[RMDB]
RNA sequence: GGGAACGACUCGAGUAGAGUCGAAAACUAAGGAGCGUGUGCUGGCGGCGGUCCUUCACGGUGCGUUGAUCGGGGCGGAUUACCAGUACGUGGGCGAGUGGUGUGCCCUGCUCCGAGCAACGGAAAAGGUUGUGCCGUCGUUCGUGGCGGCACGACCAAAAGAAACAACAACAACAAC
Reactivity to 2A3 in 0.01 (KOAc 150mM, MgCl2 10mM, bicine 150mM(pH8.5), 24C), signal-to-noise 5, nucleotides 027 to 126: c020u040a040a040g060g000a040g030c010g000u050g000u040g020c010u000g010g000c010g010g000c000g000g060u000c000c000u020u030c030a020c040g040g020u090g010c000g000u000u020g010a030u010c000g000g000g000g010c010g000g000a030u050u100a030c000c000a010g050u040a030c030g040u050g010g000g020c020g010a020g030u060g010g010u040g010u040g040c000c000c000u030g020c000u000c000c010g010a010g000c010a000a010c000g020g020a040a050a020a030
Reactivity to DMS in 0.01 (KOAc 150mM, MgCl2 10mM, bicine 150mM(pH8.5), 24C), signal-to-noise 6, nucleotides 027 to 126: c050u010a080a090g010g000a060g010c020g020u010g010u010g000c040u000g000g030c080g010g000c040g000g010u010c020c020u010u020c070a060c090g010g000u010g000c030g020u000u010g000a080u000c020g010g000g000g000c010g000g000a100u020u020a060c050c030a040g000u020a080c080g020u010g020g000g010c050g000a140g000u010g010g000u000g000u020g010c090c000c010u010g020c020u000c010c000g020a030g000c100a020a000c010g000g010a040a060a080a090